[RMDB]
RNA sequence: GGGAACGACUCGAGUAGAGUCGAAAAGGACUCCGUGAGGAGUCCGUGCAUCGAGAGAUGCACAAGGGCGAAGUGAGUCUCGGUGCCCCUCCUCCUCGAUGUUGAGAGGAGGAGAGUUGUCGUCUCACGAUUUAUAGUGAGACUGACUUGAGACUAGAUGAUACUACUCAUUCGUGAGUAGUAUCAUAAAAGAAACAACAACAACAAC
Reactivity to 2A3 in 0.01 (KOAc 150mM, MgCl2 10mM, bicine 150mM(pH8.5), 24C), signal-to-noise 3, nucleotides 027 to 156: g000g000a000c000u000c000c000g020u060g040a030g000g000a000g000u010c000c000g000u000g010c000a000u000c000g020a000g000a010g000a100u020g020c000a000c000a030a080g000g000g000c000g020a030a000g030u040g040a000g000u010c000u000c020g010g040u070g000c000c000c000c000u000c000c000u010c010c000u000c000g060a060u130g030u200u140g090a080g000a000g010g000a000g000g000a000g000a000g010u020u110g000u000c000g010u000c000u000c000a000c000g010a010u030u250u100a190u130a050g000u000g000a000g000a030c050u040g000a000c000u000u080g000a000g000a000c000u000a010g000
Reactivity to DMS in 0.01 (KOAc 150mM, MgCl2 10mM, bicine 150mM(pH8.5), 24C), signal-to-noise 4, nucleotides 027 to 156: g020g010a020c000u010c000c000g000u000g010a240g020g010a020g020u000c000c000g010u000g000c010a010u000c000g000a300g000a300g020a030u000g010c010a000c020a050a150g010g010g000c010g000a010a030g000u000g000a050g000u000c000u000c000g000g000u000g000c010c000c000c000u000c000c010u000c010c000u010c000g000a260u010g000u010u000g020a300g000a010g000g020a020g010g010a010g000a020g020u010u000g020u000c060g010u000c000u000c000a030c000g010a170u000u000u000a160u010a120g000u000g000a030g010a030c010u010g030a030c010u010u010g010a070g020a060c020u000a160g010